[RMDB]
An RNA of 207 nucleotides, treated with DMS and 2A3 and read out base by base. DMS adducts were read by reverse transcription with MarathonRT.
RNA sequence: GGGAACGACUCGAGUAGAGUCGAAAAGGUGCUCUGAAUGGAGUGCUCCACUGAGAUUAUAAAAUAGAAGGUAAGCUAUUAUCUCUUACAACAGGGCAGGGCUUGUUGGAAUAGGCGGUAAAGUCUAAAAACUACCUCACCUUCGGGUGAGGUAGAAUCAAUACAACAUCUUCGGAUGUUGUAUUGAAAAAGAAACAACAACAACAAC
Reactivity to DMS in 0.01 (KOAc 150mM, MgCl2 10mM, bicine 150mM(pH8.5), 24C), signal-to-noise 2, nucleotides 027 to 156: g000g040u000g000c000u000c000u000g020a180a120u000g000g020a040g000u000g020c010u000c040c030a140c150u000g010a110g000a090u010u000a170u010a050a100a080a050u000a080g010a100a090g000g010u010a020a080g010c050u000a070u020u000a070u000c030u000c010u000u000a080c040a070a070c020a050g030g000g060c050a070g000g010g020c050u000u000g010u000u000g000g000a070a070u000a070g010g020c000g010g010u010a040a040a100g000u020c030u000a020a050a070a090a090c000u000a000c000c000u000c010a000c000c010u010u010c300g070g020g010u000g000a010g020g030u010a000g000a030a080
Reactivity to 2A3 in 0.01 (KOAc 150mM, MgCl2 10mM, bicine 150mM(pH8.5), 24C), signal-to-noise 3, nucleotides 027 to 156: g030g000u030g000c010u030c020u060g220a200a130u230g010g010a020g000u050g010c020u030c010c000a070c090u060g020a010g020a070u050u150a130u200a210a070a090a020u130a040g070a120a020g110g020u130a020a040g030c010u040a030u080u020a020u100c030u000c040u070u120a050c030a120a020c020a020g000g030g010c010a020g040g000g010c040u040u010g010u000u020g020g010a040a040u030a030g010g010c020g010g030u080a080a040a030g010u000c040u050a070a030a020a030a050c000u000a000c000c000u000c000a000c000c010u020u060c150g050g000g000u000g000a010g000g000u000a000g000a000a000
For 2A3 the reverse transcriptase was SuperScript II with manganese. The data come from the RNA Mapping Database (RMDB), library M2RFPK. The RNA was probed in 150 mM KOAc, 10 mM MgCl2 and 150 mM bicine (pH 8.5) at 24 C. For 2A3, 1,964 sequencing reads were counted.